[RMDB]
Notes:
The record gives the reactivity of an RNA of 177 nucleotides to 2A3 and DMS. The RNA was probed in 150 mM KOAc, 10 mM MgCl2 and 150 mM bicine (pH 8.5) at 24 C.
RNA sequence: GGGAACGACUCGAGUAGAGUCGAAAACGUGAACGCCUUAUCCGGCCUACGAAUGGCGCAAGAAUCUGUAGGCCUGAUAAGCGUAGCGCAUCAGGCAUUUGCCACCACUGCCGGAUGCGGCGUGGAACUGAGCCUCAUCAUUCGUGAUGAGGCUCAGAAAAGAAACAACAACAACAAC
Reactivity to 2A3 in 0.01 (KOAc 150mM, MgCl2 10mM, bicine 150mM(pH8.5), 24C), signal-to-noise 1, nucleotides 027 to 126: c020g050u060g100a100a010c010g030c020c000u000u010a020u000c000c000g000g050c000c020u030a010c040g120a140a080u130g150g020c040g020c170a120a080g070a080a120u000c030u130g070u040a040g000g000c000c000u000g000a010u020a010a000g040c010g020u010a000g000c020g000c010a020u030c040a020g000g010c020a090u060u100u180g020c040c000a030c030c020a010c040u050g000c030c000g000g020a040u080g030c000g000g000c000g000u020g040g060a040a080
Reactivity to DMS in 0.01 (KOAc 150mM, MgCl2 10mM, bicine 150mM(pH8.5), 24C), signal-to-noise 2, nucleotides 027 to 126: c030g000u010g000a050a050c020g020c120c050u000u000a000u000c020c080g000g000c000c010u000a010c040g010a100a100u000g000g030c140g030c200a100a100g020a040a070u000c060u010g010u000a030g000g010c000c000u020g000a010u000a020a070g000c020g040u010a080g000c000g010c050a030u010c010a030g030g010c000a090u000u020u010g000c020c060a120c050c030a170c240u000g010c000c000g000g000a030u000g000c040g000g010c020g000u000g000g000a100a130